[RMDB]
RNA sequence: GGGAACGACUCGAGUAGAGUCGAAAACGGAAUGCCGCCGGUACUUUCGGCGAUGACGUCAUCGAUGGAUCGGUUUUCGCGCUUGGCCUUCUGCUCAUCGAGGAAGGUGAUGCGGCCGGUGGCAAUGCGGCCCGGCAGGACGAUGUUGACGGUGAUGGACACACUACAGGUUCGCCUGUAGUGUGUCAAAAGAAACAACAACAACAAC
Reactivity to 2A3 in 0.01 (KOAc 150mM, MgCl2 10mM, bicine 150mM(pH8.5), 24C), signal-to-noise 1, nucleotides 027 to 156: c030g000g060a290a070u070g010c000c000g010c000c000g000g030u140a220c080u100u150u050c070g050g000c000g020a020u000g030a050c070g130u240c070a130u090c110g110a060u160g230g040a110u090c110g100g000u020u110u060u200c010g000c010g030c030u090u070g090g000c000c000u020u000c000u030g030c030u010c020a040u020c040g000a000g040g010a020a000g010g000u050g020a010u110g030c030g000g000c020c000g000g000u000g000g000c030a000a020u060g010c040g000g000c000c000c000g000g000c010a040g020g070a020c000g020a050u000g000u030u060g000a020c020g050g010u040g000a090u090g090